[RMDB]
Annotation
Source: RMDB library OK2TST, as collected in RNAgym. The record gives the reactivity of an RNA of 177 nucleotides to DMS and 2A3. For 2A3 the reverse transcriptase was SuperScript II with manganese. The RNA was probed in 150 mM KOAc, 10 mM MgCl2 and 150 mM bicine (pH 8.5) at 24 C. DMS adducts were read by reverse transcription with MarathonRT.
RNA sequence: GGGAACGACUCGAGUAGAGUCGAAAAGGUACUCCAUUGGCAACUGAUUCAAGCGGAAACUUCGUUACUAGCUCUGGUGACAUCAUUGAUAUAGAUGAUGAGGGAAAACCACUUGGACCAGACGGGCGAGAGAGAUACGUUUCGACGUAUCUCUCUCAAAAGAAACAACAACAACAAC
Reactivity to DMS in 0.01 (KOAc 150mM, MgCl2 10mM, bicine 150mM(pH8.5), 24C), signal-to-noise 3, nucleotides 027 to 126: g020g010u000a080c070u000c000c000a110u010u000g030g000c030a120a110c020u000g000a100u010u010c020a020a050g010c050g010g000a050a110a220c060u000u000c020g000u000u000a050c030u000a060g010c100u000c050u000g000g000u000g020a230c150a080u010c020a000u000u010g000a140u020a080u000a050g010a130u000g010a000u000g000a110g010g000g000a050a070a090a110c020c010a050c040u010u000g010g010a040c000c030a060g000a080c120g030g010g030c250
Reactivity to 2A3 in 0.01 (KOAc 150mM, MgCl2 10mM, bicine 150mM(pH8.5), 24C), signal-to-noise 3, nucleotides 027 to 126: g070g000u040a040c010u020c040c010a080u050u100g060g000c030a110a080c070u000g030a050u070u040c020a040a010g010c020g050g040a060a040a060c010u050u020c020g050u050u040a030c030u030a000g030c020u000c020u080g070g040u060g060a050c020a040u050c000a000u020u090g120a070u140a010u060a300g120a130u040g000a000u020g010a050g050g020g020a040a050a030a110c010c000a030c030u030u030g030g010a010c000c000a050g010a090c040g040g040g070c050